This 177-nucleotide RNA was probed chemically with DMS. The DMS profile rests on 936 reads.
RNA sequence: GGGAACGACUCGAGUAGAGUCGAAAAAAGAUAUGGACGACCGUAACAGCAUCGAUCGUAUAAAAGUCCUAUAUCGGAAACGAUAUAGGUCGCUAUACGGGAGCUGGAUAAGGUCGUCCUAAGUCAAGUUGAUGGCUAAGUUCGCUUAGCCAUCAACAAAAGAAACAACAACAACAAC
Reactivity to DMS in 0.01 (KOAc 150mM, MgCl2 10mM, bicine 150mM(pH8.5), 24C), signal-to-noise 1, nucleotides 027 to 126: a130a080g020a000u000a120u010g000g000a010c000g030a010c000c000g000u000a170a300c010a010g030c010a300u010c200g000a020u010c000g000u000a000u010a010a090a130a190g000u010c000c000u000a000u000a000u010c000g050g000a020a010a100c000g010a030u000a000u000a000g010g010u000c000g010c300u010a020u000a000c000g000g000g000a030g020c020u000g010g000a060u020a120a160g000g030u000c000g040u000c000c000u000a000a040g000u010c070a050a150